This 177-nucleotide RNA was probed chemically with DMS and 2A3.
[RMDB]
RNA sequence: GGGAACGACUCGAGUAGAGUCGAAAAUUUCUUCUCCAUAUUGGGAAGUGCGGAACAGUGCUUGCCUUGCAUAUACUGCCUUAGUUCGUCGUAUGAUUGGAUUUCUUAACGUGCAAAAACGAGAAUCGCAGGAUAUUAUUUUCGAAUAAUAUCCUGCAAAAGAAACAACAACAACAAC
Reactivity to DMS in 0.01 (KOAc 150mM, MgCl2 10mM, bicine 150mM(pH8.5), 24C), signal-to-noise 6, nucleotides 027 to 126: u010u000u000c040u000u000c030u000c000c080a140u000a130u010u010g010g010g000a060a050g010u000g020c070g000g010a110a090c150a120g010u000g000c030u000u010g000c040c040u000u010g000c050a040u000a070u010a090c110u000g000c050c080u010u000a090g010u000u000c050g020u000c050g010u010a060u010g010a090u000u000g000g010a080u010u000u000c060u000u000a060a080c060g010u010g010c050a040a040a050a100a050c060g000a110g010a050a070u010c200
Reactivity to 2A3 in 0.01 (KOAc 150mM, MgCl2 10mM, bicine 150mM(pH8.5), 24C), signal-to-noise 3, nucleotides 027 to 126: u080u080u020c000u040u000c020u000c020c010a040u090a140u230u130g020g010g000a040a030g030u030g030c020g040g050a130a100c030a110g030u010g030c020u040u050g030c000c000u000u050g020c030a040u160a030u040a200c050u070g060c010c020u100u080a040g040u040u060c040g040u020c030g020u140a060u180g090a150u120u210g030g000a020u070u080u000c020u060u090a100a040c040g010u040g020c030a110a020a060a120a010c050g010a050g050a100a030u070c060

For DMS, 6,835 sequencing reads were counted. The RNA was probed in 150 mM KOAc, 10 mM MgCl2 and 150 mM bicine (pH 8.5) at 24 C. Reactivities are rounded to 0.1 and cut off at 0 and 3.